[RMDB]
RNA sequence: GGGAACGACUCGAGUAGAGUCGAAAAGAUAUGGAGCCAGACAUGUCAUUGGUUCGGAAACGAACCAUUGACAACAGCUGGCCUCCUAAGUCAAAUCGCCCUUCCUAGUUCGCUAGGAAGGGCGAAACACUAAACAUGCGUUCGCGCAUGUUUAGUGAAAAGAAACAACAACAACAAC
Reactivity to DMS in 0.01 (KOAc 150mM, MgCl2 10mM, bicine 150mM(pH8.5), 24C), signal-to-noise 4, nucleotides 027 to 126: g010a030u000a300u000g000g000a080g000c020c010a010g020a040c080a260u000g010u000c000a000u000u000g000g010u020u000c000g020g010a070a070a220c000g010a010a010c000c000a000u000u000g000a020c010a030a060c280a160g000c010u000g000g010c100c030u000c010c010u000a050a130g010u000c040a030a100a180u000c000g000c000c000c000u000u000c000c000u010a000g010u000u030c170g020c000u000a010g000g000a010a000g000g010g010c000g000a000a010a050
Reactivity to 2A3 in 0.01 (KOAc 150mM, MgCl2 10mM, bicine 150mM(pH8.5), 24C), signal-to-noise 3, nucleotides 027 to 126: g020a000u070a020u170g020g010a000g020c010c010a020g010a180c080a150u120g010u000c010a010u000u010g000g000u010u000c010g010g020a060a100a030c000g000a000a000c000c000a010u000u000g010a000c010a020a030c030a030g020c010u010g010g000c030c000u000c000c000u010a130a010g060u040c040a010a030a240u050c000g010c000c000c020u000u010c000c010u000a010g010u070u080c280g040c180u000a000g020g000a000a000g000g000g010c000g010a010a000a000

Notes:
The record gives the reactivity of an RNA of 177 nucleotides to DMS and 2A3. For DMS the reverse transcriptase was MarathonRT. It was measured as part of the RMDB library TTRDEL. Conditions: 150 mM KOAc, 10 mM MgCl2 and 150 mM bicine (pH 8.5), 24 C. Values cover nucleotides 27 to 126.